[RMDB]
Source information:
An RNA of 207 nucleotides, treated with 2A3 and read out base by base. The reactions ran in a buffer of 150 mM KOAc, 10 mM MgCl2 and 150 mM bicine (pH 8.5), at 24 C. For 2A3, 586 sequencing reads were counted. Source: RMDB library OK3TST, as collected in RNAgym. Reactivities are given for positions 27 through 156. For 2A3 the reverse transcriptase was SuperScript II with manganese.
RNA sequence: GGGAACGACUCGAGUAGAGUCGAAAACACGGUGCAACUCCGCAUCCUCGAGCAUAGUCCUCGUUGGAUCUGGCUCCGGAGACGACAGAGACUCGGAGUGCUGAGAGUCAGAUACGCAACCCAUCUGCAUACGCUUCACCACACUAUCGCAGCAUCAUGAGUCAUGGACUUUCGAGUCCAUGACUCAAAAAGAAACAACAACAACAAC
Reactivity to 2A3 in 0.01 (KOAc 150mM, MgCl2 10mM, bicine 150mM(pH8.5), 24C), signal-to-noise 1, nucleotides 027 to 156: c020a000c050g050g010u060g010c000a070a130c010u000c030c000g100c000a030u000c000c030u010c000g030a000g000c030a160u130a160g070u110c040c000u080c030g060u000u040g100g000a070u000c000u010g020g000c010u000c020c010g000g000a000g020a030c000g060a000c050a110g260a100g060a150c020u000c020g010g010a040g030u070g030c030u010g040a040g000a000g220u010c020a000g000a040u180a040c080g000c160a000a020c000c000c000a000u040c010u090g030c000a030u020a120c140g000c050u120u140c080a020c030c050a070c020a020c000u130a080u160c080g040c050a020g000c030a000u100c010a030